RNA sequence: GGGAACGACUCGAGUAGAGUCGAAAAAUGCAGUUCGAUGCGGUCAAAAUCCACUUAAGGCUUCUGAUCUCUUGAGAGGUGUUCAGCGAAAUGUGUCGAGGGCUGUUCUUAGGGGAAAGAUCAAGAGUACUCUCUAACGCUUCGGCGUUAGAGAGUAAAAAGAAACAACAACAACAAC
Reactivity to DMS in 0.01 (KOAc 150mM, MgCl2 10mM, bicine 150mM(pH8.5), 24C), signal-to-noise 2, nucleotides 027 to 126: a060u020g010c070a030g010u000u010c040g060a030u000g000c020g070g050u010c080a070a110a110a120u020c000c000a020c030u040u010a150a090g000g000c080u020u000c090u000g010a040u030c020u000c040u000u000g000a130g010a150g000g000u020g000u010u000c260a070g000c100g060a020a040a030u040g020u000g030u000c010g000a090g000g010g040c000u000g000u000u010c060u000u020a110g000g010g000g000a070a060a040g000a020u000c130a020a060g000a120g030
Reactivity to 2A3 in 0.01 (KOAc 150mM, MgCl2 10mM, bicine 150mM(pH8.5), 24C), signal-to-noise 2, nucleotides 027 to 126: a000u140g040c010a000g070u120u060c000g010a010u020g020c030g000g000u020c060a050a200a020a200u090c020c020a030c070u100u150a140a060g090g000c010u000u000c020u100g120a170u040c000u000c000u120u160g010a070g010a040g060g010u040g170u080u130c000a030g000c010g070a170a100a220u200g070u030g000u040c030g020a070g010g050g000c000u000g010u120u000c000u040u120a070g000g020g000g030a090a000a100g000a050u040c000a060a000g000a010g130